[RMDB]
RNA sequence: GGGAACGACUCGAGUAGAGUCGAAAAAUGAGGCCCAGCUCUGGGACGCGCUCAACGCUCGUUACGGUCUGUCCGUCGAAAAGACCUAUGACCUGCGGUUCGAAGGCGAAGAAGCCGUGCUGGUCGAGAAACGUAAUCCAUUCGUGGAUUACGUUUCAAAAGAAACAACAACAACAAC
Reactivity to 2A3 in 0.01 (KOAc 150mM, MgCl2 10mM, bicine 150mM(pH8.5), 24C), signal-to-noise 4, nucleotides 027 to 126: a000u170g030a070g090g060c040c000c010a010g010c020u000c070u120g040g010g060a040c020g000c010g000c020u060c060a040a040c030g010c030u020c020g050u080u110a060c070g000g010u010c020u020g060u030c050c040g070u020c020g060a120a100a040a040g010a010c020c010u050a100u220g000a020c000c000u010g000c010g010g030u080u040c050g060a100a040g050g020c030g010a060a020g060a050a010g110c020c010g000u000g010c010u010g000g010u030c020g010a020
Reactivity to DMS in 0.01 (KOAc 150mM, MgCl2 10mM, bicine 150mM(pH8.5), 24C), signal-to-noise 6, nucleotides 027 to 126: a110u010g010a160g010g010c100c020c010a060g010c040u000c020u020g030g010g010a140c110g010c050g020c030u000c040a080a140c060g010c030u000c130g000u000u010a100c270g000g000u000c010u000g010u000c120c190g010u000c110g010a090a080a110a040g000a030c010c030u010a150u000g000a010c010c020u000g020c030g010g010u010u010c130g010a080a110g010g010c010g000a080a090g010a100a140g010c000c010g010u000g020c040u000g000g010u000c030g010a180
This 177-nucleotide RNA was probed chemically with 2A3 and DMS. DMS adducts were read by reverse transcription with MarathonRT.